RNA sequence: GGGAACGACUCGAGUAGAGUCGAAAAUCGUACCGUGGGUAGCGAAGAAAUGGAUCACGCCCACGGUGGCCUCGCCCCGGUCGAUACGCACGAGCGUGGUAUGCGGGUCGACGCGUUUCGGGAAGAACCAAGACGAGACGUUCGCGUCUCGUCUUGGAAAAGAAACAACAACAACAAC
Reactivity to DMS in 0.01 (KOAc 150mM, MgCl2 10mM, bicine 150mM(pH8.5), 24C), signal-to-noise 1, nucleotides 027 to 126: u010c140g020u010a020c000c000g010u000g000g000g000u030a070g080c030g000a030a070g030a120a200a080u020g030g030a160u000c020a120c020g000c000c010c050a000c020g030g030u000g000g000c070c050u000c170g010c040c030c000c020g010g010u000c030g010a080u000a020c010g000c020a070c070g030a030g020c060g000u000g010g000u010a040u020g010c000g030g000g070u000c000g020a040c040g000c040g020u000u010u000c000g010g000g020a080a090g000a120a190
Reactivity to 2A3 in 0.01 (KOAc 150mM, MgCl2 10mM, bicine 150mM(pH8.5), 24C), signal-to-noise 2, nucleotides 027 to 126: u080c010g040u020a000c000c010g000u000g000g020g000u100a290g040c060g090a080a030g100a120a220a120u230g120g070a070u070c010a020c040g000c030c000c000a000c000g000g000u000g020g000c000c010u060c030g050c020c010c000c030g030g000u000c000g010a030u020a070c000g030c020a010c090g060a040g080c100g000u070g000g040u190a080u040g060c000g020g040g000u040c010g000a010c040g040c020g060u050u090u140c060g020g020g050a050a100g050a040a060
Conditions: 150 mM KOAc, 10 mM MgCl2 and 150 mM bicine (pH 8.5), 24 C. The record gives the reactivity of an RNA of 177 nucleotides to DMS and 2A3. The DMS profile rests on 1,013 reads.